[RMDB]
RNA sequence: GGGAACGACUCGAGUAGAGUCGAAAACGCACCAUGCGAAUGAUUCGUGACAGCGUAGUAUGGCUGCCAACCGCACUGGCACGAAACAGCACACUGCCGUCCUGUACCACUGUCCCGGCAUGGACGCUACCAUCCAGCUUUUCGAAGCUGGAUGGUAAAAAGAAACAACAACAACAAC
Reactivity to 2A3 in 0.01 (KOAc 150mM, MgCl2 10mM, bicine 150mM(pH8.5), 24C), signal-to-noise 2, nucleotides 027 to 126: c030g000c020a050c000c000a050u130g010c050g060a130a060u140g000a130u070u070c010g010u010g020a040c030a030g050c060g020u060a010g010u010a140u130g080g010c120u100g080c010c020a020a010c020c020g000c000a030c040u020g010g000c030a000c030g020a010a080a010c040a040g000c070a010c010a010c010u050g020c030c030g020u000c010c020u040g060u090a100c020c000a070c070u090g070u040c010c010c000g000g010c060a020u080g010g000a000c020g000c040
Reactivity to DMS in 0.01 (KOAc 150mM, MgCl2 10mM, bicine 150mM(pH8.5), 24C), signal-to-noise 2, nucleotides 027 to 126: c120g010c050a140c110c100a110u000g010c000g030a180a110u010g030a160u000u000c050g000u000g000a010c050a000g030c070g040u000a060g010u000a050u010g000g000c100u000g040c030c060a080a030c030c030g000c010a060c030u000g010g000c020a000c010g000a040a060a100c070a080g040c030a050c140a070c080u000g010c050c020g000u000c010c010u000g020u010a060c060c030a050c130u000g030u000c020c030c000g010g000c040a050u000g000g010a060c050g030c120

The record gives the reactivity of an RNA of 177 nucleotides to 2A3 and DMS. The data come from the RNA Mapping Database (RMDB), library OK2TRN. 2A3 adducts were read by reverse transcription with SuperScript II with manganese. Values cover nucleotides 27 to 126.